[RMDB]
RNA sequence: GGGAACGACUCGAGUAGAGUCGAAAACCGUAGGUACUCUUGCCCUUUAUUGUUGGGUGCACCCUGGGACCCAGUAAUACCCGGGGGGAGGCGGGGUUAACCCAUACUAUGGGAACUGCUGGGUUCCUUACGAAGUGCUUCGGCACUUCGAAAAGAAACAACAACAACAAC
Reactivity to 2A3 in 0.01 (KOAc 150mM, MgCl2 10mM, bicine 150mM(pH8.5), 24C), signal-to-noise 3, nucleotides 027 to 129: c000c000g000u030a000g050g090u070a050c000u020c010u110u160g030c000c040c000u100u150u200a150u060u130g100u060u050g000g000g020u020g040c020a090c010c000c030u050g000g000g000a000c000c000c000a010g010u010a010a060u080a170c020c020c010g010g010g000g010g010g000a000g030g030c000g010g020g000g000u030u130a130a070c000c000c010a020u110a180c120u180a100u140g000g010g040a110a010c000u000g000c010u010g010g000g010u000u000c000c000u010u040a050
Reactivity to DMS in 0.01 (KOAc 150mM, MgCl2 10mM, bicine 150mM(pH8.5), 24C), signal-to-noise 4, nucleotides 027 to 129: c020c010g030u040a000g030g040u000a010c090u050c030u020u030g030c050c010c060u030u060u070a130u030u060g040u000u030g000g030g070u010g100c090a060c050c050c070u000g030g000g040a050c010c000c040a010g050u060a070a080u030a190c050c020c030g020g020g000g030g000g010a020g080g020c000g010g030g000g020u030u110a110a140c000c000c000a040u050a110c180u090a080u040g030g040g000a060a080c000u030g040c020u020g000g000g000u020u000c010c020u040u050a060

About this RNA
Chemical mapping of a 170-nucleotide RNA with 2A3 and DMS. DMS adducts were read by reverse transcription with MarathonRT. It was measured as part of the RMDB library 15KLIB. For DMS, 12,263 sequencing reads were counted.